Source information: An RNA of 207 nucleotides, treated with 2A3 and DMS and read out base by base. The RNA was probed in 150 mM KOAc, 10 mM MgCl2 and 150 mM bicine (pH 8.5) at 24 C.
RNA sequence: GGGAACGACUCGAGUAGAGUCGAAAAGUCGGAACAUAACGACGGCGGGCCGGUGGGGAAUCAGGGGGCUACCGUGGGAUAGCGAUGAGACAGCCCCUCCGAUGGCACCAUGCGUCGGAUCGCGGAAAACACUGUAAGCCCUUCGGGGCUUACAGAACAAUGUGUAUUCCUUCGGGAAUACACAUUGAAAAGAAACAACAACAACAAC
Reactivity to 2A3 in 0.01 (KOAc 150mM, MgCl2 10mM, bicine 150mM(pH8.5), 24C), signal-to-noise 2, nucleotides 027 to 156: g010u000c030g030g070a170a070c040a150u190a130a030c040g020a000c010g010g000c040g000g020g000c120c120g030g040u190g010g030g000g030a060a090u070c030a070g000g000g030g000g000c000u060a050c060c030g070u070g020g020g030a040u120a080g020c010g030a030u010g030a040g040a090c030a010g000c000c000c010c000u000c000c020g010a010u060g100g020c020a060c060c000a130u300g040c000g000u010c000g000g000a010u020c000g020c040g040g040a090a070a040a030c110a020c020u020g010u000a000a000g010c000c000c000u020u030c120g000g000g000g000c000u010u010a010c000a000g000a000a000
Reactivity to DMS in 0.01 (KOAc 150mM, MgCl2 10mM, bicine 150mM(pH8.5), 24C), signal-to-noise 1, nucleotides 027 to 156: g030u010c000g020g040a130a170c180a130u010a070a160c010g000a020c040g010g010c040g010g000g030c060c160g000g000u000g000g000g000g000a110a090u010c100a110g020g010g030g030g060c000u020a040c050c050g040u000g010g080g000a070u000a050g000c060g010a090u000g010a220g000a150c010a100g050c010c000c010c030u000c000c000g020a050u000g020g030c080a110c140c090a040u020g050c010g000u000c000g000g000a020u000c000g010c080g040g000a150a060a110a070c050a200c000u000g000u000a000a000g020c000c000c000u010u020c270g050g030g060g000c040u000u000a000c010a000g030a070a110